[RMDB]
RNA sequence: GGGAACGACUCGAGUAGAGUCGAAAAGUAUUACCGAGGAACUGUUGCGCCUAUAGCAACGGGCUGGUACAUUAGAUCCCCGUUAGCACGGGCACAUUAUCACAUAACGUAUAAACUCGAUGUACUCGCAAUUGUUCUCUUUCGAGAGAACAAUUGCAAAAGAAACAACAACAACAAC
Reactivity to 2A3 in 0.01 (KOAc 150mM, MgCl2 10mM, bicine 150mM(pH8.5), 24C), signal-to-noise 2, nucleotides 027 to 126: g000u000a050u100u170a030c000c060g070a020g090g060a130a030c070u090g080u100u060g000c070g050c030c040u130a060u120a170g000c010a000a010c000g000g000g000c080u100g020g050u100a070c020a100u090u140a040g030a150u040c000c000c000c000g000u010u060a020g000c020a000c030g000g000g100c010a010c000a090u100u210a070u150c000a030c010a180u130a210a010c080g070u050a030u040a100a110a010c000u010c010g030a050u000g000u020a010c010u000c090
Reactivity to DMS in 0.01 (KOAc 150mM, MgCl2 10mM, bicine 150mM(pH8.5), 24C), signal-to-noise 2, nucleotides 027 to 126: g000u020a040u010u000a030c010c000g030a060g020g010a200a130c070u000g050u000u000g030c050g000c110c060u020a250u040a140g050c060a010a010c030g020g030g000c150u030g000g030u000a020c030a170u010u000a050g000a060u000c180c000c030c000g000u000u000a060g050c100a140c280g000g000g060c150a030c050a030u000u000a050u010c160a100c140a110u010a050a020c270g000u000a090u000a060a070a150c000u000c030g000a010u010g000u000a000c010u010c120
Description
The record gives the reactivity of an RNA of 177 nucleotides to 2A3 and DMS. Values cover nucleotides 27 to 126. 2A3 adducts were read by reverse transcription with SuperScript II with manganese. For 2A3, 1,640 sequencing reads were counted. DMS adducts were read by reverse transcription with MarathonRT.